This 177-nucleotide RNA was probed chemically with DMS and 2A3. The RNA was probed in 150 mM KOAc, 10 mM MgCl2 and 150 mM bicine (pH 8.5) at 24 C. The data come from the RNA Mapping Database (RMDB), library RFM100.
[RMDB]
RNA sequence: GGGAACGACUCGAGUAGAGUCGAAAAGUAAGCUUAUGGGCCGAAAGGGAAGCGGGUUAAAAUUCCUGCACCACUCUAAAGGAUAUUAGGGCAACCGAUCGUAAUCCGGGACAUCAAUUGGUGGUCGGGGAGUGUGUGUAUUCGUACACACACUCCCAAAAGAAACAACAACAACAAC
Reactivity to DMS in 0.01 (KOAc 150mM, MgCl2 10mM, bicine 150mM(pH8.5), 24C), signal-to-noise 1, nucleotides 027 to 126: g000u030a020a090g000c020u030u030a130u000g000g000g050c000c020g030a020a060a080g000g000g000a030a040g000c080g000g000g000u000u000a070a170a140a200u050u000c000c050u000g000c090a090c030c000a170c000u010c000u000a050a090a010g000g000a060u020a140u000u070a030g000g030g000c300a020a000c130c050g010a000u050c140g000u040a020a120u000c030c010g030g010g000a050c090a070u010c080a010a140u010u000g050g000u000g000g000u000c180g080
Reactivity to 2A3 in 0.01 (KOAc 150mM, MgCl2 10mM, bicine 150mM(pH8.5), 24C), signal-to-noise 2, nucleotides 027 to 126: g030u040a040a040g000c060u080u010a060u140g040g040g000c000c000g210a090a000a000g020g010g020a110a000g000c040g030g010g000u100u110a000a120a060a080u190u100c000c000u000g000c010a000c020c020a090c000u090c010u100a120a000a000g050g000a010u040a030u170u140a010g030g000g000c010a010a000c000c110g150a060u140c000g070u180a000a060u000c010c010g000g000g000a070c040a070u070c010a020a250u050u110g020g000u010g000g000u040c060g000